[RMDB]
An RNA of 177 nucleotides, treated with DMS and read out base by base. Reactivities are given for positions 27 through 126. The RNA was probed in 150 mM KOAc, 10 mM MgCl2 and 150 mM bicine (pH 8.5) at 24 C. High DMS reactivity at an A or C suggests that its Watson-Crick edge is free.
RNA sequence: GGGAACGACUCGAGUAGAGUCGAAAACUCAGGAAGGCCUCGUGGCGGAGUGGUUACGCAGAGGACUGCAAAUCCUUGCACCCCGGUUCGAUUCCGGGCGAGGCCUCCAAACUUUUAUCAUUUGAAAACUAAAUUUAUUAUUCGUAAUAAAUUUAGUAAAAGAAACAACAACAACAAC
Reactivity to DMS in 0.01 (KOAc 150mM, MgCl2 10mM, bicine 150mM(pH8.5), 24C), signal-to-noise 1, nucleotides 027 to 126: c000u000c040a250g030g000a070a040g010g000c000c010u000c010g030u000g000g030c000g030g010a080g000u000g030g000u010u010a210c040g070c010a300g010a000g000g000a010c000u010g000c260a060a130a260u040c000c010u040u000g000c260a000c000c020c030c010g010g000u000u000c000g000a300u000u000c000c010g000g030g010c000g000a000g000g000c000c000u000c000c000a010a120a120c040u010u000u020u020a040u010c040a160u000u000u010g000a120a120a110